Structure probing data (2A3 and DMS) for a 207-nucleotide construct. For 2A3, 1,147 sequencing reads were counted. For 2A3 the reverse transcriptase was SuperScript II with manganese. Source: RMDB library RNAMAK, as collected in RNAgym. For DMS the reverse transcriptase was MarathonRT.

RNA sequence: GGGAACGACUCGAGUAGAGUCGAAAAGCCUCCUUCGGGAGGCAAAAAAGCGUACUACGAAGCGAAGAACGACAUGGGAGUAUGGAUCCCAAAUAGGAUCCUGUACGAAGAACAUGUCGGGAGCUUCGUAUCGCAAAAAGCAAGAUUCGUCUUGCAAACCGUGCAUUAGAUUCGUCUAAUGCACGGUAAAAGAAACAACAACAACAAC
Reactivity to 2A3 in 0.01 (KOAc 150mM, MgCl2 10mM, bicine 150mM(pH8.5), 24C), signal-to-noise 1, nucleotides 027 to 156: g000c000c000u000c000c000u000u030c050g110g000g000a000g000g010c000a000a020a090a000a000a000g040c020g000u050a040c080u000a000c000g000a000a000g000c000g070a150a030g070a130a000c010g010a000c000a000u000g010g010g020a110g010u020a000u040g000g000a000u020c030c040c040a050a160a120u220a060g030g000a000u000c000c050u070g030u080a030c020g010a200a030g000a060a000c010a000u000g000u010c000g000g000g000a010g000c000u000u000c000g000u000a000u020c000g020c000a000a180a050a000a000g000c000a010a010g010a020u080u020c160g170u000c100u000u000g010c000a040a000
Reactivity to DMS in 0.01 (KOAc 150mM, MgCl2 10mM, bicine 150mM(pH8.5), 24C), signal-to-noise 1, nucleotides 027 to 156: g000c000c000u000c000c000u020u000c300g050g060g030a000g030g110c040a000a000a000a000a010a010g010c010g000u000a100c080u000a000c000g000a090a200g050c010g000a110a100g060a140a200c010g020a040c010a060u000g010g000g000a180g020u000a040u000g010g000a010u000c000c000c010a020a070a170u030a030g040g010a000u010c000c000u010g070u000a010c020g010a120a080g000a120a120c010a010u030g000u000c000g010g000g040a300g010c000u010u020c000g000u000a010u010c010g000c040a050a010a050a060a110g000c000a010a020g000a160u000u000c300g010u010c000u000u010g020c010a030a100